[RMDB]
RNA sequence: GGGAACGACUCGAGUAGAGUCGAAAAAAGAUAUGGAGUUGUGUGCCUUCGGGAACGCUUGGUCCUCGAAGAACACCCUCGGAAACGAGGGUGGGAGAGGACACAAGCGAAGCAACUCCUAAGUCAAGGAAUAACUAUUCUUCGGAAUAGUUAUUCCAAAAGAAACAACAACAACAAC
Reactivity to 2A3 in 0.01 (KOAc 150mM, MgCl2 10mM, bicine 150mM(pH8.5), 24C), signal-to-noise 4, nucleotides 027 to 126: a000a030g100a070u120a080u160g010g000a000g000u010u020g010u030g080u210g140c000c010u050u100c300g080g000g010a170a090c010g010c010u000u000g000g000u010c010c000u020c010g150a290a040g000a020a010c010a020c000c000c000u000c000g020g000a080a070a010c020g000a010g000g010g000u000g020g000g010a080g010a000g000g010a000c040a040c000a050a000g000c010g000a000a000g010c010a010a000c000u060c000c000u030a170a020g040u010c080a110a110
Reactivity to DMS in 0.01 (KOAc 150mM, MgCl2 10mM, bicine 150mM(pH8.5), 24C), signal-to-noise 4, nucleotides 027 to 126: a140a070g010a040u000a300u000g000g010a030g010u000u010g020u000g010u000g000c010c000u000u020c160g040g010g010a080a300c030g000c010u000u000g020g010u000c010c010u000c010g010a110a160g010a130a190c020a000c000c000c000u010c010g020g000a110a080a190c000g010a010g000g000g010u000g000g010g000a090g000a030g000g000a010c000a020c000a010a000g010c020g020a130a210g000c020a010a010c000u000c000c000u010a010a110g000u000c020a110a130